[RMDB]
RNA sequence: GGGAACGACUCGAGUAGAGUCGAAAAACCAUGAAAGUGUGGUCAGCCGUGCCCUGCCUCCUUCGGGAAACACACAACUGGGUUCGUGAAACAGGGCGUAGUGAGGCUGCGGCCAAUAUCGAGACCUACUCAGCAACAAGUUCGCUUGUUGCUGAGUAAAAGAAACAACAACAACAAC
Reactivity to DMS in 0.01 (KOAc 150mM, MgCl2 10mM, bicine 150mM(pH8.5), 24C), signal-to-noise 3, nucleotides 027 to 126: a110c000c000a050u030g020a090a060a170g000u040g010u000g010g000u000c000a150g010c010c040g040u030g010c000c000c000u000g010c190c080u040c030c030u000u080c080g000g000g010a060a070a170c140a130c080a060c150a070a100c150u050g010g010g030u010u000c150g010u010g000a170a070a250c050a010g000g000g000c070g000u000a050g010u010g010a100g010g000c010u030g030c180g040g000c000c040a040a090u060a080u000c060g000a070g000a120c090c010u000
Reactivity to 2A3 in 0.01 (KOAc 150mM, MgCl2 10mM, bicine 150mM(pH8.5), 24C), signal-to-noise 3, nucleotides 027 to 126: a000c010c020a030u130g160a090a210a060g290u240g010u040g140g010u020c050a030g000c010c010g120u120g000c030c000c030u000g020c000c030u040c000c000u080u050c070g050g060g010a030a040a000c060a000c020a020c020a060a180c090u090g020g220g000u120u030c090g060u080g070a010a050a120c000a020g040g000g000c040g020u010a050g010u020g040a060g030g020c010u000g040c050g010g000c000c020a060a060u140a030u110c040g000a010g000a050c000c020u000
An RNA of 177 nucleotides, treated with DMS and 2A3 and read out base by base. For 2A3 the reverse transcriptase was SuperScript II with manganese. The data come from the RNA Mapping Database (RMDB), libraries RFM100 and RFMREP.